[RMDB]
RNA sequence: GGGAACGACUCGAGUAGAGUCGAAAACUUUAUCAAUAUGGCCAAAAUUGAUAAUAUUCCUUGCAAUAGCAUGUUAGGUUCGCAUGGUGCACUAUUGUGUUAUUAGUAACUAAGUAAGCUUACAAUCCACCCGAGACUGUUUCGACAGUCUCGGGUGAAAAGAAACAACAACAACAAC
Reactivity to 2A3 in 0.01 (KOAc 150mM, MgCl2 10mM, bicine 150mM(pH8.5), 24C), signal-to-noise 1, nucleotides 027 to 126: c000u000u000u000a000u000c000a000a000u020a190u280g230g050c020c030a080a000a000a000u040u000g000a000u000a000a000u020a070u050u040c010c000u010u010g030c000a000a110u000a090g000c010a000u090g090u050u060a000g000g080u170u000c040g110c020a150u070g160g080u260g050c060a040c090u000a000u000u120g000u000g000u000u000a000u010u010a070g040u000a130a000c040u000a020a150g110u000a090a090g100c050u010u030a060c000a030a030u000c000